RNA sequence: GGGAACGACUCGAGUAGAGUCGAAAAGGGGAGUGUGAUCCUGGUACCGCCGUAGAAACUGGAUUACGACGUCUACCCGGGAUUCAAACUCGGCCCCUCUCAGAGGUGACUCUGAACGAAAGGUCUGUGCAAAGCACACUGAUGAGUUCCUGAAAUGGAUGUCACUAUAGUUCGCUAUAGUGACAUCAAAAGAAACAACAACAACAAC
Reactivity to DMS in 0.01 (KOAc 150mM, MgCl2 10mM, bicine 150mM(pH8.5), 24C), signal-to-noise 3, nucleotides 027 to 156: g010g000g010g010a140g010u010g000u000g000a030u000c010c010u010g000g010u000a020c140c030g030c010c040g090u000a050g000a140a120a300c110u000g040g040a260u010u010a050c000g010a030c000g020u000c030u000a030c050c030c040g050g000g010a060u000u000c110a060a090a060c050u000c020g010g000c030c000c000c030u000c040u000c010a090g000a300g000g040u010g000a150c000u000c010u010g010a060a070c060g030a090a170a150g000g000u010c050u010g090u000g000c030a100a060a180g000c000a100c040a030c030u000g010a300u000g010a180g010u010u000c020c030u000g010a070a160a220u010g030
Reactivity to 2A3 in 0.01 (KOAc 150mM, MgCl2 10mM, bicine 150mM(pH8.5), 24C), signal-to-noise 7, nucleotides 027 to 156: g030g010g000g000a020g000u040g000u080g020a010u000c000c010u010g000g000u000a010c010c010g000c000c010g000u020a020g160a150a280a110c270u240g120g040a140u170u040a010c010g010a000c000g010u010c070u040a050c030c030c040g000g000g000a030u110u080c040a060a080a070c010u000c000g190g000c010c000c000c010u000c000u000c000a030g030a050g030g060u070g030a050c010u030c020u100g050a090a030c040g120a130a090a060g080g050u080c100u090g020u050g010c050a160a130a080g020c020a020c010a010c050u050g010a070u100g020a070g010u010u000c000c000u050g080a100a080a020u180g090